Chemical mapping of a 177-nucleotide RNA with DMS. Reactivities are rounded to 0.1 and cut off at 0 and 3. It was measured as part of the RMDB library OK2TRN.

[RMDB]
RNA sequence: GGGAACGACUCGAGUAGAGUCGAAAACUGAUCGUGUGGAGCGAGGCCACCAUCGCAUCAGGGACCAAUCCUGAUCUCUCGCCCUUCUCACACAUGGUCAAUGGGGGUGCACAGAGCGAGGCGAUGAGGGACGUGAUGAGUUCGCUCAUCACGUCCCAAAAGAAACAACAACAACAAC
Reactivity to DMS in 0.01 (KOAc 150mM, MgCl2 10mM, bicine 150mM(pH8.5), 24C), signal-to-noise 1, nucleotides 027 to 126: c120u010g010a000u000c010g010u000g020u010g000g000a110g030c170g000a060g000g050c080c070a090c170c100a120u000c030g030c150a050u010c000a070g010g000g010a120c290c240a150a070u010c010c000u000g030a010u000c030u000c050u000c100g020c000c020c000u000u000c030u020c020a050c030a040c050a100u030g020g010u000c060a100a090u000g000g000g000g000g000u000g030c220a050c200a020g000a040g030c050g000a100g040g000c120g010a000u000g010a170